[RMDB]
RNA sequence: GGGAACGACUCGAGUAGAGUCGAAAAUACCAGGUUGAUUCUGCCUGACGUGGACGCUUGCCUCGAAGAUUAAGCCAUGCAAGUCUGUGAAUAUAUGAAACAGUGUACGGCUCAGUAUAACACCUAUUAACACUAGUCAAUUCGUUGACUAGUGUUAAAAAGAAACAACAACAACAAC
Reactivity to DMS in 0.01 (KOAc 150mM, MgCl2 10mM, bicine 150mM(pH8.5), 24C), signal-to-noise 8, nucleotides 027 to 126: u030a180c030c000a080g000g020u010u000g010a110u010u010c050u000g010c050c020u000g020a100c070g020u010g000g000a110c080g010c030u020u010g000c040c030u010c050g010a090a080g000a090u010u010a080a070g010c020c010a090u010g000c040a050a120g010u020c020u010g000u000g000a080a120u030a120u020a090u010g000a180a090a040c030a030g010u010g020u000a050c070g010g010c020u000c060a060g010u010a060u010a060a080c140a090c050c070u000a120u010
Reactivity to 2A3 in 0.01 (KOAc 150mM, MgCl2 10mM, bicine 150mM(pH8.5), 24C), signal-to-noise 7, nucleotides 027 to 126: u090a010c000c000a000g040g020u020u050g060a130u080u030c020u050g020c000c020u030g020a040c030g040u050g040g010a010c030g010c040u050u070g010c000c010u030c020g050a060a020g000a070u150u140a070a010g020c010c010a020u090g010c030a080a040g090u040c020u020g030u020g050a140a020u130a040u050a040u280g110a110a040a010c010a010g020u030g020u080a020c020g010g000c010u010c050a040g050u070a060u020a180a050c040a030c010c010u020a070u070